[RMDB]
RNA sequence: GGGAACGACUCGAGUAGAGUCGAAAAAUAGCGAGCGUACAUCUCUCUCAGACUGUACGACAGUCUGACUCUCUAGUACUACAGGCUCCUGAGAGAGAGAGAGCGUUCACAGGUGCCUGUAAUUUAACCGUACCAGAGCAUUCGUGCUCUGGUACGGAAAAGAAACAACAACAACAAC
Reactivity to 2A3 in 0.01 (KOAc 150mM, MgCl2 10mM, bicine 150mM(pH8.5), 24C), signal-to-noise 1, nucleotides 027 to 126: a010u090a020g080c060g010a010g010c010g020u040a020c030a050u000c000u000c010u010c000u010c000a000g010a030c010u030g020u230a170c090g080a040c120a000g000u000c010u010g000a010c000u020c030u000c020u030a030g080u030a120c030u000a010c010a000g000g000c000u000c040c000u080g020a070g020a010g000a000g000a000g000a010g010a070g000c020g010u050u050c060a070c000a030g010g020u010g010c000c000u040g020u010a030a030u080u090u130a060a050